[RMDB]
RNA sequence: GGGAACGACUCGAGUAGAGUCGAAAAGAUUUUUAGACAUAGAGUGCAGUGUUCUUUAAACUAAGCAUGGCAGCUGUGUAAUUAUGUUUUUCUCUAGGGAGGAGGUAAUGAAGACGUUGUCAAUAGCAAGUUCAGUGGUCAUUUACAGCUCUUAAGCCCAUGUAGAUGGGUUCGCCCAUCUACAUGGAAAAGAAACAACAACAACAAC
Reactivity to 2A3 in 0.01 (KOAc 150mM, MgCl2 10mM, bicine 150mM(pH8.5), 24C), signal-to-noise 3, nucleotides 027 to 156: g010a030u070u070u080u160u200a050g040a020c010a010u080a030g050a020g070u050g030c020a000g020u010g020u100u070c030u050u090u080a040a080a090c060u040a050a000g040c010a010u030g030g000c010a010g020c040u050g020u000g010u090a080a060u040u090a060u080g070u000u010u010u130u000c040u000c040u040a030g110g000g020a040g000g010a020g000g020u080a100a030u080g040a090a030g070a020c060g020u030u000g020u010c000a010a090u030a070g030c030a080a080g020u050u050c020a010g000u050g040g020u020c010a010u030u060u090a040c030a020g070c000u050c020u100u080a110a040g040c050
Reactivity to DMS in 0.01 (KOAc 150mM, MgCl2 10mM, bicine 150mM(pH8.5), 24C), signal-to-noise 2, nucleotides 027 to 156: g010a110u020u010u020u000u060a080g020a090c020a080u010a220g020a210g040u010g010c030a070g000u000g010u010u000c010u000u010u000a070a090a140c090u010a060a130g030c030a090u010g000g040c020a080g000c000u000g010u000g020u000a070a080u000u010a040u000g000u000u000u000u000u020c020u020c040u020a180g030g010g040a110g020g000a020g010g010u000a050a040u000g000a070a140g010a060c100g020u000u010g000u000c050a030a090u010a080g040c010a030a110g020u010u000c020a060g060u000g000g010u020c030a060u010u000u000a080c020a110g000c030u010c050u000u000a070a140g000c100